RNA sequence: GGGAACGACUCGAGUAGAGUCGAAAAACCGGGGCUAAUACCGGAUAACAUUUUGAACCGCAUGGUUCGAAAUUGAAAGGCGGCUUCGGCUGUCACUUAUGGAUGGACCCGCGUCGCAUUAGCUAGUCCUCAGCCCGUAAUUCGUUACGGGCUGAGGAAAAGAAACAACAACAACAAC
Reactivity to 2A3 in 0.01 (KOAc 150mM, MgCl2 10mM, bicine 150mM(pH8.5), 24C), signal-to-noise 2, nucleotides 027 to 126: a000c000c000g000g000g070g000c030u070a030a020u030a300c000c000g160g000a000u050a040a050c060a010u010u010u000u000g000a000a070c010c010g080c250a040u300g000g000u000u000c000g000a040a000a000u060u060g000a020a090a090g000g020c000g010g000c070u130u120c120g010g000c000u030g000u000c010a080c140u210u080a120u210g170g000a060u100g030g000a020c000c010c030g060c000g000u010c020g030c060a020u010u010a000g010c060u000a030g060u020
An RNA of 177 nucleotides, treated with 2A3 and read out base by base. It was measured as part of the RMDB library RFM100. For 2A3, 483 sequencing reads were counted. The reactions ran in a buffer of 150 mM KOAc, 10 mM MgCl2 and 150 mM bicine (pH 8.5), at 24 C.